RNA sequence: GGGAACGACUCGAGUAGAGUCGAAAAUUCGGUACAUAAGUACCGAUUAAAUAUGCGGUGAGCCACUGCAACGGCAGCCGCAUAAAUCCUGUACGGGCCGAUCCACAGAAAACGGUAGGCGCCGACGUUCUAAUCAAUUCUUCGGAAUUGAUUAGAAAAAAGAAACAACAACAACAAC
Reactivity to 2A3 in 0.01 (KOAc 150mM, MgCl2 10mM, bicine 150mM(pH8.5), 24C), signal-to-noise 9, nucleotides 027 to 126: u040u010c000g000g000u020a020c050a080u300a300a150g000u000a000c010c000g000a000u000u000a000a000a010u020a000u000g000c010g000g010u020g030a070g020c000c010a060c110u280g070c100a090a050c060g000g000c000a000g000c000c000g000c000a000u000a000a000a000u010c000c000u010g010u030a050c010g010g000g000c010c000g030a110u140c050c020a060c030a100g290a120a120a030a010c070g010g000u010a020g020g020c090g020c030c000g000a010c010g000
Reactivity to DMS in 0.01 (KOAc 150mM, MgCl2 10mM, bicine 150mM(pH8.5), 24C), signal-to-noise 6, nucleotides 027 to 126: u020u000c000g000g010u010a010c000a170u040a110a090g010u000a000c000c000g000a010u010u010a050a080a120u000a000u000g000c000g000g000u010g010a130g000c010c000a140c150u020g010c300a110a140c140g000g000c000a300g000c000c000g000c000a000u000a010a040a080u010c010c010u000g020u020a130c020g000g000g010c010c000g000a130u060c000c010a160c130a150g010a080a110a120a120c130g000g000u000a200g000g000c020g010c000c010g000a030c070g020
The record gives the reactivity of an RNA of 177 nucleotides to 2A3 and DMS.